[RMDB]
RNA sequence: GGGAACGACUCGAGUAGAGUCGAAAAGUGAAAGCUCCUUCUCUCGCAAUGUGUAACUCAUGAUUCUCAUGACCCCUGGUUGGAGAGAUCGGGACUAGGAGCCAGGGGGCCUCUGAUUCUGCCAGCCAAAACUGUCGUAAGUUCGCUUACGACAGAACUAACCUUAUAACUUCGGUUAUAAGGUUAGAAAAGAAACAACAACAACAAC
Reactivity to DMS in 0.01 (KOAc 150mM, MgCl2 10mM, bicine 150mM(pH8.5), 24C), signal-to-noise 2, nucleotides 027 to 156: g000u000g020a040a070a110g020c030u000c020c010u010u000c010u000c000u000c030g040c050a100a060u000g030u000g020u000a120a090c070u000c050a050u000g000a130u000u000c060u000c010a070u010g010a100c020c010c030c040u020g050g050u010u010g030g000a160g020a110g010a090u010c020g000g020g030a050c030u020a070g000g010a090g020c000c020a070g000g010g000g010g010c060c030u020c060u000g000a100u000u000c020u010g000c020c020a060g040c010c030a030a040a060a160c000u000g000u010c010g030u000a020a020g020u010u010c290g030c000u000u000a000c000g000a010c000a000g000a010a170
Reactivity to 2A3 in 0.01 (KOAc 150mM, MgCl2 10mM, bicine 150mM(pH8.5), 24C), signal-to-noise 6, nucleotides 027 to 156: g100u080g060a120a030a020g020c020u010c000c010u040u010c010u010c000u010c010g070c120a080a140u120g040u040g030u180a060a050c030u030c050a030u030g050a140u260u050c080u020c060a030u100g050a080c000c000c000c040u030g030g010u030u040g030g030a050g010a000g010a080u120c080g000g020g030a020c030u060a050g050g020a010g020c000c010a020g020g000g000g020g010c000c010u030c030u040g050a090u110u030c010u070g040c010c010a020g020c010c010a050a060a070a090c020u000g000u000c000g000u000a010a000g010u020u090c220g010c130u000u000a000c000g000a010c000a000g000a000a000